[RMDB]
RNA sequence: GGGAACGACUCGAGUAGAGUCGAAAAUUAUCCACCAGAGUCGGAAUACGACCGCGUACCAGCGGCGCGACGAUGAUGGAAAGCGCAGAGGCAAUCGCGGUAUCGCAGUGACCACCGGAAGCACCACGGGUAUACUCUCUUUCGAGAGAGUAUACCCAAAAGAAACAACAACAACAAC
Reactivity to 2A3 in 0.01 (KOAc 150mM, MgCl2 10mM, bicine 150mM(pH8.5), 24C), signal-to-noise 1, nucleotides 027 to 126: u090u030a100u010c000c000a000c020c000a040g020a030g040u020c000g010g060a050a120u120a150c050g300a300c010c020g060c010g000u120a230c110c040a000g000c040g030g000c010g000c000g000a010c010g010a030u010g000a010u010g000g110a030a040a030g080c070g000c000a020g010a050g110g020c040a000a030u100c040g010c010g060g000u050a060u110c040g000c000a030g070u000g130a030c010c020a010c010c010g040g030a080a040g050c120a010c040c000a010c040
Reactivity to DMS in 0.01 (KOAc 150mM, MgCl2 10mM, bicine 150mM(pH8.5), 24C), signal-to-noise 2, nucleotides 027 to 126: u010u000a100u000c010c000a130c060c020a070g000a300g020u000c000g030g000a090a140u010a280c110g020a140c000c000g040c010g020u020a110c230c190a100g020c100g000g030c000g000c000g030a080c040g000a130u000g000a060u000g000g010a050a060a090g010c020g010c030a060g000a120g000g010c100a070a080u020c060g000c040g030g000u000a050u000c020g010c070a060g000u010g000a080c060c020a090c020c000g010g000a150a040g000c080a080c070c030a120c280
An RNA of 177 nucleotides, treated with 2A3 and DMS and read out base by base.
For 2A3 the reverse transcriptase was SuperScript II with manganese.
As a SHAPE reagent, 2A3 marks flexible, mostly unpaired nucleotides at the ribose 2'-OH.
Conditions: 150 mM KOAc, 10 mM MgCl2 and 150 mM bicine (pH 8.5), 24 C.